About this RNA
An RNA of 177 nucleotides, treated with 2A3 and DMS and read out base by base. The 2A3 profile rests on 1,968 reads. The reactions ran in a buffer of 150 mM KOAc, 10 mM MgCl2 and 150 mM bicine (pH 8.5), at 24 C. For DMS, 3,830 sequencing reads were counted. For 2A3 the reverse transcriptase was SuperScript II with manganese.

RNA sequence: GGGAACGACUCGAGUAGAGUCGAAAACGCCGGGUGCAACAGGCCGGUCCGCGCGGCAACCGCUUGAUCCGCACCCUUGCCAGCCAGCCGCUGGGUCCGCGCGACCGGCUGGUGCUGGUGCAGGUCACAAAAUGAUGGUGUUCGCACCAUCAUUUUGAAAAGAAACAACAACAACAAC
Reactivity to 2A3 in 0.01 (KOAc 150mM, MgCl2 10mM, bicine 150mM(pH8.5), 24C), signal-to-noise 1, nucleotides 027 to 126: c040g050c040c010g000g050g090u100g030c010a080a040c030a080g080g110c030c000g010g000u100c100c040g000c020g020c020g000g030c070a060a050c020c010g050c080u000u090g060a050u120c040c030g000c040a060c030c010c040u000u120g060c000c000a020g010c020c050a020g060c040c050g000c040u000g000g050g080u050c020c000g030c000g000c000g000a020c000c000g000g000c000u010g010g020u030g010c030u010g000g000u050g040c060a090g010g090u070c050a020
Reactivity to DMS in 0.01 (KOAc 150mM, MgCl2 10mM, bicine 150mM(pH8.5), 24C), signal-to-noise 3, nucleotides 027 to 126: c110g020c030c040g010g050g020u000g000c050a060a060c090a140g020g010c020c010g000g010u010c070c080g020c020g010c020g000g000c140a110a070c080c050g010c090u000u000g010a100u010c040c030g000c090a070c030c010c070u000u010g000c020c010a070g000c010c040a110g000c100c090g000c060u000g010g010g020u000c010c010g020c030g010c000g000a030c010c010g010g000c000u000g000g000u000g010c020u000g020g030u000g000c050a100g000g000u010c080a180